[RMDB]
RNA sequence: GGGAACGACUCGAGUAGAGUCGAAAAUAUCUGUUGCCGUUUGCCCAACUCUUACAGGUAAAGUUGGAAUAAUAGUUGCACCCGUUUCAGCCUGUACGCCUUCAAUACGAAUAUCUUUCACCACAAACUGGGAAUAAUGGUUCGCCAUUAUUCCCAGAAAAGAAACAACAACAACAAC
Reactivity to DMS in 0.01 (KOAc 150mM, MgCl2 10mM, bicine 150mM(pH8.5), 24C), signal-to-noise 1, nucleotides 027 to 126: u000a120u000c050u040g010u000u010g020c020c080g000u000u000u000g010c260c000c010a020a080c040u000c040u010u000a110c100a120g010g000u000a010a040a040g020u000u040g000g020a170a080u000a050a080u010a060g000u020u010g020c080a030c010c020c040g010u000u000u010c120a120g010c000c000u000g000u000a070c120g000c110c010u000u000c040a070a080u000a070c120g000a080a010u010a020u010c020u000u000u000c040a100c010c070a060c190a060a070a180